[RMDB]
RNA sequence: GGGAACGACUCGAGUAGAGUCGAAAAGGGGUCAAAGCGAUGAGGCAGCACGAGCGACGAUCUAUACUGAAGCCUCCACGGUAUAGGGAGCUCGUAUUGCCGAGCUUUGACGGAGGCACCCAAAAUCUCUGCAUACACUUCGGUGUAUGCAGAGAAACUUAGAAGCUCAGUUCGCUGAGCUUCUAAGAAAAGAAACAACAACAACAAC
Reactivity to 2A3 in 0.01 (KOAc 150mM, MgCl2 10mM, bicine 150mM(pH8.5), 24C), signal-to-noise 3, nucleotides 027 to 156: g030g010g120g000u000c000a010a000a010g020c030g240a300u210g020a130g010g000c000a000g000c020a000c000g000a000g010c010g280a300c000g000a020u010c000u000a000u000a000c000u030g050a080a020g020c010c000u000c000c000a010c000g000g000u000a010u000a000g000g010g000a010g000c020u000c000g000u000a000u010u000g010c000c000g000a000g000c000u000u010u000g000a000c000g000g000a000g000g000c010a020c000c000c030a020a100a070a120u020c000u000c000u010g010c000a000u010a000c010a010c010u050u100c250g090g000u000g000u000a000u000g010c000a000g000a010g000a000a000a000
The data come from the RNA Mapping Database (RMDB), library RNAMAK. The record gives the reactivity of an RNA of 207 nucleotides to 2A3. The reactions ran in a buffer of 150 mM KOAc, 10 mM MgCl2 and 150 mM bicine (pH 8.5), at 24 C. For 2A3 the reverse transcriptase was SuperScript II with manganese. The 2A3 profile rests on 3,802 reads.